Record summary: Structure probing data (2A3 and DMS) for a 177-nucleotide construct. Values cover nucleotides 27 to 126. For DMS the reverse transcriptase was MarathonRT. The reactions ran in a buffer of 150 mM KOAc, 10 mM MgCl2 and 150 mM bicine (pH 8.5), at 24 C.

RNA sequence: GGGAACGACUCGAGUAGAGUCGAAAAUCAACAGGGAUGAUCAAAUGUUCACGGAAAGUGAUGUUUUUGCAUUACUCAGGAUCUACAGAAUAGGAGAUGCCGUUUUAAAGAAAAUGGGCAAUCAAGGGAGUGUUUACAGUUUCGACUGUAAACACUCAAAAGAAACAACAACAACAAC
Reactivity to 2A3 in 0.01 (KOAc 150mM, MgCl2 10mM, bicine 150mM(pH8.5), 24C), signal-to-noise 2, nucleotides 027 to 126: u050c000a000a080c010a020g000g070g020a010u070g010a050u090c030a040a000a090u090g070u140u070c060a030c050g080g000a250a020a010g010u010g010a000u000g030u000u140u000u100u170g000c010a010u000u030a050c020u010c040a030g060g050a050u000c000u020a030c040a040g120a130a110u140a140g020g060a110g000a030u030g000c030c010g000u000u000u000u090a240a300a010g180a060a070a020a030u100g070g040g000c030a050a070u040c020a060a070g150g080
Reactivity to DMS in 0.01 (KOAc 150mM, MgCl2 10mM, bicine 150mM(pH8.5), 24C), signal-to-noise 3, nucleotides 027 to 126: u010c080a070a100c110a060g010g010g000a100u000g010a070u020c070a040a100a080u010g000u000u010c050a070c090g020g020a070a090a060g000u000g010a010u000g000u000u000u010u000u020g010c050a020u000u000a040c030u000c080a100g000g010a060u010c040u000a110c090a090g000a040a100u000a100g010g000a140g010a050u000g000c010c000g000u010u000u000u010a040a120a170g000a050a000a020a040u000g010g030g010c010a040a070u000c080a040a100g010g000